RNA sequence: GGGAACGACUCGAGUAGAGUCGAAAAUCCUUUGAUGUUUCCCAGCCAGGGAUUGUCGUCCUCUAGUUUCUUGAUGGUCUUCCUUGCCUUCCGGAGCCUCCUCUCGAGAUCAUCCGCUUCGUCUCUUGCUUUGACCCACUUCGAGAGGAUUUCCUCCCGAGAAGAUAAUGUUCGCAUUAUCUUCUCGAAAAGAAACAACAACAACAAC
Reactivity to 2A3 in 0.01 (KOAc 150mM, MgCl2 10mM, bicine 150mM(pH8.5), 24C), signal-to-noise 4, nucleotides 027 to 156: u010c020c000u050u030u140g070a070u050g030u020u060u070c000c020c020a010g050c050c040a030g040g020g030a050u030u050g090u060c020g030u020c020c030u040c050u050a060g050u070u130u070c030u060u140g070a100u160g020g040u010c010u050u050c040c000u050u070g030c010c000u060u070c050c050g020g000a020g020c000c010u000c000c000u000c000u000c010g040a050g020a100u050c030a050u040c050c010g000c050u040u050c040g110u020c020u010c000u100u090g030c000u050u050u110g040a080c020c000c000a090c040u070u060c030g020a020g000a000g020g000a000u030u040u020c000c000u010c000c040
Reactivity to DMS in 0.01 (KOAc 150mM, MgCl2 10mM, bicine 150mM(pH8.5), 24C), signal-to-noise 2, nucleotides 027 to 156: u000c010c020u050u000u000g010a110u000g010u000u000u000c010c020c030a300g000c080c050a080g020g020g000a040u000u000g010u000c030g020u000c120c050u000c040u000a140g000u000u010u000c020u010u010g000a090u010g000g010u000c040u000u000c020c030u000u010g000c030c020u000u000c030c040g020g010a210g050c060c070u010c030c010u000c010u000c020g010a070g030a110u010c040a070u000c050c050g000c080u000u000c060g030u000c040u020c040u000u000g000c050u010u010u010g030a300c040c000c040a110c150u010u010c050g020a100g030a100g040g000a150u000u010u000c020c000u000c030c030